[RMDB]
RNA sequence: GGGAACGACUCGAGUAGAGUCGAAAAAGUCCUCCGCCUGGUUACGACCAGUCGGAGGACAAGGAGGUCAGGGUCAGGAGCCCCCCCCUGAACCCAGGAUAACCCUCAAAGUCGGGGGGCAACCCAAAGGAGCGAUGAAGUUUCGACUUCAUCGCAACAAUAUGUUUGGAUUCGUCCAAACAUAUUGAAAAGAAACAACAACAACAAC
Reactivity to DMS in 0.01 (KOAc 150mM, MgCl2 10mM, bicine 150mM(pH8.5), 24C), signal-to-noise 1, nucleotides 027 to 156: a170g000u000c000c000u000c000c030g070c100c000u000g000g050u000u010a080c210g020a120c030c000a020g030u000c010g000g020a040g050g010a000c020a010a010g010g000a070g020g020u000c120a100g000g030g020u000c020a080g000g020a190g020c000c000c000c000c000c000c000c000u000g000a090a050c000c030c030a080g020g010a220u010a120a100c020c000c000u000c050a120a120a120g010u000c070g010g010g060g010g030g000c030a040a020c000c000c010a050a060a110g000g010a080g010c000g010a010u000g010a020a010g000u020u010u000c290g000a100c000u020u000c010a030u000c000g030c020a010a030
Reactivity to 2A3 in 0.01 (KOAc 150mM, MgCl2 10mM, bicine 150mM(pH8.5), 24C), signal-to-noise 2, nucleotides 027 to 156: a000g010u010c000c000u000c000c000g020c000c000u020g000g040u060u080a120c210g010a010c050c000a000g010u000c000g020g000a000g000g000a000c000a000a000g050g010a010g000g030u180c160a060g020g000g000u000c000a000g000g010a050g000c010c000c000c020c000c000c000c000u000g030a080a050c020c010c000a000g020g030a090u080a140a070c030c000c000u000c050a100a110a020g160u150c020g000g000g000g010g000g040c010a020a030c000c020c000a030a030a030g220g020a110g030c000g000a010u000g020a040a000g000u010u080u200c230g140a060c000u000u000c000a000u020c000g000c000a000a000
This 207-nucleotide RNA was probed chemically with DMS and 2A3. It was measured as part of the RMDB library M2RFPK. For 2A3, 1,367 sequencing reads were counted. DMS adducts were read by reverse transcription with MarathonRT.